[RMDB]
RNA sequence: GGGAACGACUCGAGUAGAGUCGAAAAAACUAGCUGAAUGGUCACCAGAAUUGUUUGCGAAAUUACCUGAAUUUUCUUACCAUCACAAGCACUUCGAUUACUUGUGGUAAUUGCAUGUUCAGACAUUGGUUAGGGUUUAUUUCGAUAAACCCUAACCAAAAGAAACAACAACAACAAC
Reactivity to DMS in 0.01 (KOAc 150mM, MgCl2 10mM, bicine 150mM(pH8.5), 24C), signal-to-noise 1, nucleotides 027 to 126: a010a140c000u000a120g000c020u000g000a000a060u000g000g000u000c040a100c030c000a100g000a090a100u000u000g070u000u000u020g000c090g000a100a010a150u000u000a030c000c000u000g000a000a000u000u000u000u000c000u020u070a190c020c090a080u000c020a050c050a000a030g000c110a090c080u000u070c300g000a050u000u000a170c100u000u000g000u000g000g000u000a000a000u050u000g010c160a040u000g000u100u000c090a090g000a200c220a120u000u000
Reactivity to 2A3 in 0.01 (KOAc 150mM, MgCl2 10mM, bicine 150mM(pH8.5), 24C), signal-to-noise 3, nucleotides 027 to 126: a000a000c060u050a040g000c020u030g050a090a070u080g060g030u000c000a020c100c010a030g040a110a060u080u070g060u190u130u090g020c070g030a030a080a100u070u150a100c000c010u000g040a050a050u070u060u030u060c000u000u030a040c040c010a020u120c020a000c010a040a000g040c090a100c080u220u150c170g150a220u120u200a030c000u010u040g000u000g020g000u020a020a060u100u140g090c050a050u050g000u000u020c000a000g020a190c020a090u090u000